[RMDB]
Chemical mapping of a 177-nucleotide RNA with DMS. DMS adducts were read by reverse transcription with MarathonRT. For DMS, 820 sequencing reads were counted.
RNA sequence: GGGAACGACUCGAGUAGAGUCGAAAAUAAUCAUUUAAACAAAGGGUUUGUCUUUAAUGAUUGCAGACAACGCCUAGUUGUUUGGUGGGAGGAGUGCUUAAUGCACCAGGAUUGGGUGGAACCAGCAUACCUCACCUGCUUUCGAGCAGGUGAGGUAAAAAGAAACAACAACAACAAC
Reactivity to DMS in 0.01 (KOAc 150mM, MgCl2 10mM, bicine 150mM(pH8.5), 24C), signal-to-noise 1, nucleotides 027 to 126: u000a090a100u010c010a030u000u000u000a000a010a030c020a040a040a190g000g010g000u030u000u000g010u010c100u000u000u000a060a030u010g000a080u000u000g020c280a040g000a030c060a030a040c090g000c080c030u000a090g000u010u030g000u000u010u000g020g040u000g000g000g020a120g020g010a160g000u000g030c000u000u050a090a080u020g000c000a030c000c080a120g010g020a180u010u010g010g000g000u000g000g010a120a150c140c100a050g020c110a180